[RMDB]
RNA sequence: GGGAACGACUCGAGUAGAGUCGAAAACUGGCGCAAGCCAGGGCAAGUGAGGCGCAAGCCUCGCUGACGGCGUGGAAAGGGCUCUCUCUGAGGCCCGAGUACGCUGAAAGUGCCACAGAAACGUAGCGAUGAAACGAAAGUUCGCUUUCGUUUCAUCAAAAGAAACAACAACAACAAC
Reactivity to DMS in 0.01 (KOAc 150mM, MgCl2 10mM, bicine 150mM(pH8.5), 24C), signal-to-noise 1, nucleotides 027 to 126: c010u000g000g010c000g020c300a120a170g020c000c000a020g000g010g030c050a140a040g020u000g010a010g000g030c010g010c280a090a220g000c000c000u000c000g020c000u000g000a300c030g000g010c010g000u010g000g010a060a220a280g000g020g000c000u010c030u000c030u020c160u030g000a020g020g010c010c000c010g000a090g000u020a020c010g000c010u000g020a050a120a160g010u010g010c010c040a150c190a130g020a040a090a040c150g000u010a060g020c220
Reactivity to 2A3 in 0.01 (KOAc 150mM, MgCl2 10mM, bicine 150mM(pH8.5), 24C), signal-to-noise 1, nucleotides 027 to 126: c000u000g000g030c000g000c070a130a040g010c000c000a000g000g040g040c040a060a000g010u020g050a000g010g000c030g010c060a050a040g000c000c000u010c010g000c010u000g040a050c060g000g020c030g020u010g030g060a180a090a090g020g010g000c020u040c000u000c010u000c150u300g020a040g010g000c000c000c000g010a000g000u010a000c010g000c010u000g030a040a040a010g130u090g000c000c020a080c040a060g180a030a120a010c090g050u110a020g080c010